[RMDB]
RNA sequence: GGGAACGACUCGAGUAGAGUCGAAAAAACAUGGUCCUGUGGGGGCUGGCUGGCCUCCUGGGCUUUGCAGUGUGGGGCGAGGCGUAUGCGGCAUUCAGGAGCAAGCCGCCGACGCGGCCGCAGGCGGACCUAGACUAGAAUUCGUUCUAGUCUAGGUAAAAGAAACAACAACAACAAC
Reactivity to DMS in 0.01 (KOAc 150mM, MgCl2 10mM, bicine 150mM(pH8.5), 24C), signal-to-noise 8, nucleotides 027 to 126: a060a080c050a050u000g010g010u000c000c000u000g030u010g020g010g010g000g010c010u000g020g020c180u010g020g010c040c000u000c010c010u000g010g000g000c030u000u000u000g020c060a090g010u000g000u000g010g010g010g010c040g000a090g010g010c030g020u000a050u000g010c020g010g000c010a120u000u000c090a110g000g000a100g010c100a130a100g010c010c010g010c000c030g010a050c070g010c060g010g010c010c020g010c030a060g010g010c040g010g000
Reactivity to 2A3 in 0.01 (KOAc 150mM, MgCl2 10mM, bicine 150mM(pH8.5), 24C), signal-to-noise 6, nucleotides 027 to 126: a010a010c080a060u080g020g010u090c010c010u070g040u100g060g010g030g010g010c040u060g170g060c120u150g030g020c030c000u000c000c000u000g010g010g000c010u070u070u120g030c040a070g030u050g020u070g130g070g000g010c020g030a080g100g000c010g000u030a030u100g020c000g020g000c040a110u120u120c040a070g080g050a070g050c020a040a020g010c000c000g000c010c010g010a020c030g020c000g080g000c010c020g010c010a000g010g020c010g030g020